[RMDB]
RNA sequence: GGGAACGACUCGAGUAGAGUCGAAAAGCGACGCGAAGUGUGGAUAGCGGAGGGGACGCGGGUACGAAUAACGGGAAACACACGAAUAACCGGAAUAUACAUAGAAGUACCGAAUGUAUAUGAAGAAGGGAUUACUAUUGUUCGCAAUAGUAAUCCCAAAAGAAACAACAACAACAAC
Reactivity to 2A3 in 0.01 (KOAc 150mM, MgCl2 10mM, bicine 150mM(pH8.5), 24C), signal-to-noise 4, nucleotides 027 to 126: g100c090g090a060c080g020c020g080a070a080g020u020g020u040g100g050a090u070a060g010c080g020g050a050g070g030g000g000a020c060g020c060g050g000g000u040a030c030g050a080a040u180a270a060c030g000g050g000a030a090a010c030a000c010a010c060g040a080a030u110a110a050c060c010g010g010a030a000u040a000u020a000c010a000u060a050g090a160a030g170u110a100c030c030g020a010a040u000g010u010a010u000a000u080g080a030a050g020a110a080
Reactivity to DMS in 0.01 (KOAc 150mM, MgCl2 10mM, bicine 150mM(pH8.5), 24C), signal-to-noise 2, nucleotides 027 to 126: g010c070g000a090c030g020c030g020a100a100g050u000g000u000g000g000a130u020a160g040c140g000g020a130g020g000g000g020a060c060g000c050g000g010g000u000a050c110g030a070a040u010a160a140c120g000g150g010a100a050a160c110a090c050a050c090g010a140a080u040a030a110c130c000g000g010a160a000u030a000u000a040c020a030u000a160g030a080a130g060u000a020c120c020g000a070a030u000g020u000a010u010a000u010g000a110a080g000a060a180
Background: This 177-nucleotide RNA was probed chemically with 2A3 and DMS. For DMS, 2,014 sequencing reads were counted. Conditions: 150 mM KOAc, 10 mM MgCl2 and 150 mM bicine (pH 8.5), 24 C.